[RMDB]
RNA sequence: GGGAACGACUCGAGUAGAGUCGAAAACUGACCAGCUAUGAGGUCAUACAUCGUCAUAGCACCAACUGUUAAUUAAAUUAAAAAGGAAAUAAAAAUGUUUAAACGUAAAUCUACUGCUGAACUCGCAGGUCAUGUUGCAGUUCGCUGCAGCAUGACCAAAAGAAACAACAACAACAAC
Reactivity to DMS in 0.01 (KOAc 150mM, MgCl2 10mM, bicine 150mM(pH8.5), 24C), signal-to-noise 2, nucleotides 027 to 126: c000u000g000a000c000c000a280g000c010u000a000u060g000a000g010g040u000c000a160u070a150c290a130u000c110g000u000c000a000u000a000g020c000a250c160c080a050a110c160u020g010u000u000a030a060u040u010a020a030a110u000u060a030a020a020a000a110g000g050a190a000a080u000a010a010a130a040a130u010g000u000u010u000a000a100a040c080g020u000a030a040a090u000c060u010a120c140u000g000c040u020g000a100a020c030u000c140g010c210a120
Reactivity to 2A3 in 0.01 (KOAc 150mM, MgCl2 10mM, bicine 150mM(pH8.5), 24C), signal-to-noise 5, nucleotides 027 to 126: c040u030g000a000c000c000a000g000c000u000a000u010g010a000g030g000u010c000a000u220a160c120a210u180c140g050u030c000a020u000a010g050c000a000c010c020a020a060c020u090g050u160u130a050a020u140u140a080a120a140u060u230a070a070a040a020a030g080g020a090a100a050u300a060a130a040a010a010u100g040u140u180u190a150a180a010c020g000u030a000a080a120u030c060u070a050c010u070g070c010u040g010a080a040c010u030c090g090c030a040
This 177-nucleotide RNA was probed chemically with DMS and 2A3. The DMS profile rests on 1,669 reads. Values cover nucleotides 27 to 126.